An RNA of 177 nucleotides, treated with DMS and 2A3 and read out base by base. The reactions ran in a buffer of 150 mM KOAc, 10 mM MgCl2 and 150 mM bicine (pH 8.5), at 24 C. Source: RMDB library OK1LIB, as collected in RNAgym.
RNA sequence: GGGAACGACUCGAGUAGAGUCGAAAACAAGGUGGGCGGAAUGGCUGCACAGUCAAUGAUUUCUCUCUGGUUAUAUGGUGCCCACUCUGAAUCCAACAGGAGCCGGAGAUGUAUAACAGACUUGGCCAAUAUAGGCCACGUUCGCGUGGCCUAUAUUAAAAGAAACAACAACAACAAC
Reactivity to DMS in 0.01 (KOAc 150mM, MgCl2 10mM, bicine 150mM(pH8.5), 24C), signal-to-noise 3, nucleotides 027 to 126: c100a070a060g000g010u000g000g000g030c000g010g050a090a140u000g000g000c020u010g000c090a090c180a030g000u000c020a150a120u100g010a190u000u000u010c050u000c010u000c000u000g000g010u000u000a070u010a080u050g020g010u020g030c010c010c000a030c010u000c020u010g000a130a100u010c000c020a160a160c230a140g000g020a050g040c030c010g000g020a010g000a020u000g020u070a030u010a090a130c130a080g000a020c020u000u020g010g000c000c020
Reactivity to 2A3 in 0.01 (KOAc 150mM, MgCl2 10mM, bicine 150mM(pH8.5), 24C), signal-to-noise 3, nucleotides 027 to 126: c050a000a050g050g000u020g000g000g000c050g040g110a120a080u100g040g000c010u100g050c070a040c060a090g050u030c030a030a140u180g130a170u010u160u000c000u000c000u000c010u020g000g040u150u100a120u040a050u300g080g060u130g010c000c000c000a000c020u000c000u000g000a010a030u000c010c000a060a070c050a230g130g020a000g000c000c000g000g000a000g000a000u080g010u040a040u010a090a070c050a020g050a010c000u030u080g010g000c000c000